Overview: Structure probing data (DMS and 2A3) for a 207-nucleotide construct. It was measured as part of the RMDB library M2RFPK. Conditions: 150 mM KOAc, 10 mM MgCl2 and 150 mM bicine (pH 8.5), 24 C. The 2A3 profile rests on 5,447 reads. For DMS the reverse transcriptase was MarathonRT.

RNA sequence: GGGAACGACUCGAGUAGAGUCGAAAAACUCCUAUUCCAACACGUCCUCGUCGUACAGAGUGGUAACGUGUGUCACCACAUAUCCAAGCUUGGGUACACGGGCUUGACCCAACCCCUUGGGCGGAUGAAAACCAGAUUACGUUCGCGUAAUCUGGAACUUAGAUGAACAGUUCGCUGUUCAUCUAAGAAAAGAAACAACAACAACAAC
Reactivity to DMS in 0.01 (KOAc 150mM, MgCl2 10mM, bicine 150mM(pH8.5), 24C), signal-to-noise 3, nucleotides 027 to 156: a050c030u000c030c000u000a120u000u000c050c030a040a090c060a040c030g010u010c030c010u000c020g000u000c110g000u030a170c090a140g000a100g020u000g010g030u010a030a040c000g050u010g030u000g000u000c070a110c060c010a070c050a130u000a100u000c000c000a060a300g010c080u000u000g020g020g050u000a060c180a140c060g020g010g040c020u010u000g000a160c010c010c010a070a090c070c010c010c020u010u000g010g000g030c260g010g000a100u000g000a040a050a070a130c000c000a010g040a020u000u000a000c010g000u000u010c300g050c010g010u000a000a010u010c000u020g010g020a000a030
Reactivity to 2A3 in 0.01 (KOAc 150mM, MgCl2 10mM, bicine 150mM(pH8.5), 24C), signal-to-noise 7, nucleotides 027 to 156: a000c090u080c030c000u080a130u130u120c070c050a050a000c050a010c020g030u030c010c000u050c030g210u020c030g040u220a120c130a110g050a020g020u080g000g050u070a080a030c010g010u030g030u030g060u080c040a060c170c010a080c030a120u180a010u110c000c000a000a020g040c040u010u010g000g000g000u010a010c030a010c020g010g000g020c010u170u300g170a300c000c000c010a000a040c000c000c000c000u000u010g010g000g000c010g000g000a020u040g040a060a090a020a030c000c000a000g000a000u010u000a000c000g020u030u070c250g000c000g100u000a000a000u000c000u000g000g000a000a010